RNA sequence: GGGAACGACUCGAGUAGAGUCGAAAAGGGUUUAACUCCUGCUUGUUACCGUUUCAUCCGACCGGAGUCAGAUGUCGUUUUGGUGUCUGAUUCGGUAAGGAACCGGGAGCACCAUCUGCGUAGGCUUGAAUUACUAGUACUUCGGUACUAGUAAUUCAAAAGAAACAACAACAACAAC
Reactivity to 2A3 in 0.01 (KOAc 150mM, MgCl2 10mM, bicine 150mM(pH8.5), 24C), signal-to-noise 9, nucleotides 027 to 126: g050g020g020u070u120u110a070a030c050u040c010c000u040g020c070u060u070g080u110u080a100c010c020g020u020u080u160c100a110u000c010c020g020a020c010c010g110g020a080g120u020c010a010g010a010u020g020u030c030g080u070u060u300u300g010g000u010g010u000c000u000g000a010u010u010c000g000g000u020a060a110g030g000a010a020c020c000g020g000g010a010g010c010a020c020c020a070u070c030u110g060c040g140u120a050g080g040c000u010u010
Reactivity to DMS in 0.01 (KOAc 150mM, MgCl2 10mM, bicine 150mM(pH8.5), 24C), signal-to-noise 5, nucleotides 027 to 126: g000g000g000u010u010u010a100a150c170u010c010c020u000g010c120u010u000g000u000u000a120c040c020g000u000u020u010c140a110u000c050c070g000a040c030c000g010g010a020g010u000c000a010g010a020u000g010u000c000g010u010u000u030u000g020g000u000g010u000c000u000g000a040u000u000c000g000g010u000a030a070g000g000a080a090c140c010g000g000g000a070g010c040a090c090c030a080u010c070u020g010c070g020u000a100g010g020c110u000u000

The record gives the reactivity of an RNA of 177 nucleotides to 2A3 and DMS. The reactions ran in a buffer of 150 mM KOAc, 10 mM MgCl2 and 150 mM bicine (pH 8.5), at 24 C. It was measured as part of the RMDB libraries RFM100 and RFMREP. Reactivities are given for positions 27 through 126.